[RMDB]
RNA sequence: GGGAACGACUCGAGUAGAGUCGAAAACAAUCUUCCAGUGACCUGUGUGAUGUUGACUCAUUCUCAUGGAGAUCAUAUCAAAGGACUUGAUGGGGUACUUGAGAAAGACACUAAAAUAGUAAUACCCACGCUACGCAGUAUUCGUACUGCGUAGCGUAAAAGAAACAACAACAACAAC
Reactivity to DMS in 0.01 (KOAc 150mM, MgCl2 10mM, bicine 150mM(pH8.5), 24C), signal-to-noise 2, nucleotides 027 to 126: c140a050a190u010c020u000u000c020c000a020g030u030g010a120c090c000u000g040u040g000u020g010a090u000g040u010u000g000a050c090u000c040a220u000u010c040u000c030a030u010g010g000a080g000a040u000c020a010u000a180u000c100a030a090a090g000g020a190c080u000u010g000a000u010g010g000g010g040u030a010c050u040u050g000a000g000a020a020a210g000a040c060a040c040u000a050a070a090a060u000a020g000u040a080a110u000a160c000c000c020
Reactivity to 2A3 in 0.01 (KOAc 150mM, MgCl2 10mM, bicine 150mM(pH8.5), 24C), signal-to-noise 3, nucleotides 027 to 126: c030a050a140u030c020u150u010c020c030a030g010u010g180a100c000c010u090g000u000g080u020g100a010u040g000u070u050g020a080c050u000c070a030u230u010c050u070c070a030u200g040g000a060g040a210u020c000a000u050a000u040c010a080a060a060g120g010a020c020u030u040g030a000u040g040g000g000g070u080a080c030u040u050g000a000g020a080a110a000g040a000c040a050c130u130a010a050a030a120u120a090g080u030a040a090u050a190c010c000c010
Structure probing data (DMS and 2A3) for a 177-nucleotide construct. DMS adducts were read by reverse transcription with MarathonRT. It was measured as part of the RMDB library OK1LIB. The RNA was probed in 150 mM KOAc, 10 mM MgCl2 and 150 mM bicine (pH 8.5) at 24 C.